RNA sequence: GGGAACGACUCGAGUAGAGUCGAAAAGAUAUGGAACUACGGUGCCGACGAAGCUUAUCGGAAACGAUAAGCAGAGGAACUACACCGUGUAGUUCCUAAGUCAAACACAUUCCUUCGGGAAUGUGAACCUGAGUGAAAGCUUCGGCUUUCACUCAGGAAAAGAAACAACAACAACAAC
Reactivity to DMS in 0.01 (KOAc 150mM, MgCl2 10mM, bicine 150mM(pH8.5), 24C), signal-to-noise 1, nucleotides 027 to 126: g010a050u000a150u050g000g000a010a010c000u010a000c000g010g000u000g030c000c170g070a230c070g000a300a100g060c000u000u000a000u000c010g000g010a100a030a110c000g000a000u000a000a000g010c000a040g000a300g010g000a140a190c100u000a100c000a140c030c050g010u000g020u000a000g020u000u000c000c000u000a000a000g000u000c020a030a230a180c020a000c000a030u020u000c000c000u000u000c150g100g030g000a000a000u000g000u000g000a060a160